[RMDB]
Background:
The data come from the RNA Mapping Database (RMDB), library OK3TST. An RNA of 207 nucleotides, treated with 2A3 and DMS and read out base by base. DMS adducts were read by reverse transcription with MarathonRT. Conditions: 150 mM KOAc, 10 mM MgCl2 and 150 mM bicine (pH 8.5), 24 C.
RNA sequence: GGGAACGACUCGAGUAGAGUCGAAAAAGAAUGGAAACUCCACAAGGCCUGUAGAAUGUGGAUAGCAAUAUUUGACGUUCACCCUUCUUUGGGUGGAUCACAUAAGAACUAUUAAUAUAUAGGUGCCAAUGUAGUGCUGUAGAAAUGUAAGUAAAAAGGUAUGGUAAGAAUUCGUUCUUACCAUACCAAAAGAAACAACAACAACAAC
Reactivity to 2A3 in 0.01 (KOAc 150mM, MgCl2 10mM, bicine 150mM(pH8.5), 24C), signal-to-noise 3, nucleotides 027 to 156: a010g050a030a040u060g030g030a080a110a070c040u070c060c020a030c010a030a040g040g020c010c040u060g020u040a010g040a120a070u090g000u040g040g040a020u040a030g050c050a080a030u070a070u090u020u030g040a010c050g000u000u000c000a000c010c010c000u100u110c100u200u270u100g000g000g000u010g000g000a000u030c010a030c030a050u130a050a040g010a170a020c010u030a050u220u120a200a030u070a030u060a010u070a220g040g000u010g030c010c040a050a020u070g010u070a040g040u030g020c050u040g020u030a010g100a060a130a030u120g010u070a010a070g070u080a020a060a110a010a030
Reactivity to DMS in 0.01 (KOAc 150mM, MgCl2 10mM, bicine 150mM(pH8.5), 24C), signal-to-noise 1, nucleotides 027 to 156: a090g000a110a080u000g040g000a190a120a090c040u000c040c030a080c080a140a100g010g000c040c030u020g000u000a090g020a110a080u000g020u020g000g000a030u000a010g000c000a060a110u020a080u000u010u010g010a140c070g040u000u000c000a020c030c010c000u040u000c230u000u010u000g010g020g010u010g010g010a030u000c030a090c050a080u000a160a090g000a160a080c020u000a010u020u000a130a050u000a110u000a160u000a070g050g030u000g030c050c030a050a100u000g020u000a060g020u000g020c020u000g020u000a040g000a020a070a070u000g000u000a040a080g030u010a040a040a050a100a170